[RMDB]
An RNA of 207 nucleotides, treated with 2A3 and read out base by base. For 2A3 the reverse transcriptase was SuperScript II with manganese. The reactions ran in a buffer of 150 mM KOAc, 10 mM MgCl2 and 150 mM bicine (pH 8.5), at 24 C. Source: RMDB library VIROID, as collected in RNAgym.

RNA sequence: GGGAACGACUCGAGUAGAGUCGAAAACGUAUUUCGGAGCAUGUGUUUCGGGGGCAGGCAUGGCUACAUAAAGCUAGAGAAGUGGGUCGAAGUGGGGCGUAAAGCAAGGACGGUCCAAGGGCGAGUCGACCUCUCCAUCGGCACGAGGACGUGCCUGGGUUACGAAGAUGUUCGCAUCUUCGUAACCAAAAGAAACAACAACAACAAC
Reactivity to 2A3 in 0.01 (KOAc 150mM, MgCl2 10mM, bicine 150mM(pH8.5), 24C), signal-to-noise 2, nucleotides 027 to 156: c030g060u070a120u040u250u100c080g050g010a020g020c070a050u040g080u030g030u110u140u160c100g000g000g030g000g000c020a000g050g000c020a060u060g000g000c010u040a000c020a090u080a050a190a020g010c010u050a020g010a000g000a200a020g020u140g000g020g050u000c020g010a040a020g030u030g020g010g000g000c020g010u090a100a090a000g070c000a040a020g060g040a000c000g030g110u000c010c030a000a060g000g060g020c020g040a000g000u020c000g060a080c000c010u020c030u000c030c050a130u110c050g020g010c020a000c110g020a050g220g010a030c000g000u000g010c000c030u000g050